[RMDB]
RNA sequence: GGGAACGACUCGAGUAGAGUCGAAAACAGAUAUGGAAGCCCAUGAAAUUGAUGAACUGAGAGUUGCUUCCAGUCCAGAGCGCACCAUCUGGAAUUCCAGUCUGAGGUUACAAUUAGAACUCCUGACUGCCACGUCAAAAUUCGUUUUGACGUGGCAAAAAGAAACAACAACAACAAC
Reactivity to DMS in 0.01 (KOAc 150mM, MgCl2 10mM, bicine 150mM(pH8.5), 24C), signal-to-noise 2, nucleotides 027 to 126: c030a060g000a030u000a050u000g000g020a110a030g000c160c080c000a040u000g020a030a050a160u000u040g000a210u040g050a070a100c060u030g000a070g020a040g010u040u050g040c150u000u010c000c000a050g010u000c020c000a020g000a080g000c080g010c050a050c110c040a070u010c010u010g000g000a130a190u000u000c080c010a020g010u000c000u000g010a030g040g000u030u040a120c060a050a120u000u070a090g000a050a080c070u000c000c020u000g000a110c170
Reactivity to 2A3 in 0.01 (KOAc 150mM, MgCl2 10mM, bicine 150mM(pH8.5), 24C), signal-to-noise 2, nucleotides 027 to 126: c010a000g060a060u080a100u090g050g040a050a010g000c000c010c000a000u050g090a070a110a090u170u150g080a150u060g070a090a040c000u060g060a010g000a000g170u240u110g000c020u040u000c000c000a000g010u040c000c000a020g000a010g000c150g030c010a020c090c010a040u020c020u000g000g020a040a010u070u030c050c000a030g080u020c000u000g070a070g000g020u100u210a100c040a050a120u200u090a040g000a050a010c030u040c040c000u010g060a020c050

Chemical mapping of a 177-nucleotide RNA with DMS and 2A3.
Reactivities are rounded to 0.1 and cut off at 0 and 3.
Conditions: 150 mM KOAc, 10 mM MgCl2 and 150 mM bicine (pH 8.5), 24 C.